Annotation
This 177-nucleotide RNA was probed chemically with DMS and 2A3. DMS adducts were read by reverse transcription with MarathonRT. Reactivities are rounded to 0.1 and cut off at 0 and 3.

RNA sequence: GGGAACGACUCGAGUAGAGUCGAAAACAGGAAUACCCGAAUCAUGAGAACUCUGUUUCGAAAGGAUUUGCGGUAGAGCACAUAGAAUGGGACCCGAAAGGUUGUGAACUAUGCUUGAGGAAGGCGACAGUGUAGUGUCCUUCGGGACACUACACUGAAAAGAAACAACAACAACAAC
Reactivity to DMS in 0.01 (KOAc 150mM, MgCl2 10mM, bicine 150mM(pH8.5), 24C), signal-to-noise 2, nucleotides 027 to 126: c070a040g030g020a120a130u000a000c010c020c010g020a000a000u000c000a010u020g000a300g000a000a010c000u050c160u020g020u070u000u000c010g000a090a080a110g000g000a000u000u000u000g010c240g040g040u010a010g000a100g000c000a140c070a040u030a020g010a110a300u010g010g000g010a070c010c010c020g010a030a030a140g050g000u000u000g000u000g000a040a070c070u010a020u030g000c110u010u000g000a110g030g000a080a030g000g050c030g000a140
Reactivity to 2A3 in 0.01 (KOAc 150mM, MgCl2 10mM, bicine 150mM(pH8.5), 24C), signal-to-noise 1, nucleotides 027 to 126: c050a000g080g110a080a140u050a050c050c000c000g000a000a000u080c020a050u040g080a000g000a050a000c000u120c150u300g160u040u010u000c000g080a000a000a020g080g010a000u000u000u000g070c260g000g000u000a020g000a000g040c050a000c120a070u060a020g080a080a040u060g060g000g090a060c020c000c020g030a000a000a000g020g000u010u000g010u090g050a000a000c000u090a050u150g030c060u060u120g060a120g030g040a050a120g010g000c010g000a000